[RMDB]
RNA sequence: GGGAACGACUCGAGUAGAGUCGAAAAUCCUGCACCUUUAUCAAUGGAGGAACUCGACUUUGCUGUGGGUCCCAAAGGGACCUUAGGUGCAGACAGUUACCGGCGGUGAAGUGUGAGGUGAGGUUGGUCCCAUUGAACCUUUCGAGGUUCAAUGGGAAAAAGAAACAACAACAACAAC
Reactivity to DMS in 0.01 (KOAc 150mM, MgCl2 10mM, bicine 150mM(pH8.5), 24C), signal-to-noise 2, nucleotides 027 to 126: u030c050c000u000g030c000a060c020c000u000u000u000a020u020c040a090a300u030g000g000a120g000g020a050a050c030u000c010g020a110c050u000u010u010g000c010u010g010u030g010g000g000u000c010c000c000a120a180a170g010g040g000a000c010c000u000u000a020g020g010u000g000c070a030g000a090c090a050g000u000u000a060c010c000g000g000c300g000g000u020g010a020a060g010u020g000u010g010a060g030g000u010g000a080g000g010u000u000g000g000
Reactivity to 2A3 in 0.01 (KOAc 150mM, MgCl2 10mM, bicine 150mM(pH8.5), 24C), signal-to-noise 2, nucleotides 027 to 126: u000c000c000u080g100c030a010c000c010u030u010u050a080u060c040a040a040u050g040g050a130g070g130a040a070c000u030c030g090a030c040u080u040u030g000c030u070g010u130g040g000g000u010c000c000c010a220a090a080g000g030g000a000c000c000u010u060a050g000g020u000g000c000a000g040a080c000a010g000u000u050a030c000c040g000g000c030g040g000u000g000a000a000g140u140g010u010g100a000g000g010u010g050a100g100g000u020u030g000g030